[RMDB]
RNA sequence: GGGAACGACUCGAGUAGAGUCGAAAACAGAUAUUCGUAUCUGACAACAGGGGUCCACUGCGGCUGUACUACCCACCGAACUACUCCUGAAGCCUCCACGGGAGCGAGGUACAGAAGCAGUGGACGGAGGCACCCAAUGCACUACUUUCGAGUAGAACAAUUUUAUGCGUUUCGACGCAUAAAAUUGAAAAGAAACAACAACAACAAC
Reactivity to 2A3 in 0.01 (KOAc 150mM, MgCl2 10mM, bicine 150mM(pH8.5), 24C), signal-to-noise 2, nucleotides 027 to 156: c000a010g030a020u030a020u070u150c230g010u040a000u050c010u030g060a060c060a160a030c020a170g060g000g070g000u040c000c000a000c000u010g000c000g060g050c050u050g030u070a040c030u120a100c010c060c060a100c070c010g040a120a070c070u150a030c000u150c000c000u030g060a120a030g020c010c000u000c040c040a020c020g000g000g000a030g020c040g040a050g020g020u040a010c000a050g020a030a000g000c010a010g000u000g000g000a000c000g000g000a000g000g020c010a020c000c000c000a030a070u200g000c090a000c070u050a010c000u100u120u150c190g090a000g020u040a010g060a110a000
Reactivity to DMS in 0.01 (KOAc 150mM, MgCl2 10mM, bicine 150mM(pH8.5), 24C), signal-to-noise 1, nucleotides 027 to 156: c010a030g040a000u000a030u010u030c220g020u000a010u000c020u010g010a200c100a080a040c090a160g030g000g080g000u020c030c050a020c010u000g030c020g110g000c020u000g000u000a040c010u000a150c100c060c040a270c140c090g010a130a110c030u000a080c000u010c000c010u000g010a110a100g000c030c030u000c040c020a300c010g010g000g000a040g010c020g000a050g050g010u000a030c050a070g030a120a010g030c000a030g030u000g030g030a020c000g000g010a050g080g040c030a200c040c010c000a070a170u010g020c060a210c090u000a030c010u000u000u000c270g030a040g010u000a020g000a200a270

About this RNA: The data come from the RNA Mapping Database (RMDB), library RNAMAK. The record gives the reactivity of an RNA of 207 nucleotides to 2A3 and DMS. DMS adducts were read by reverse transcription with MarathonRT. The DMS profile rests on 1,581 reads.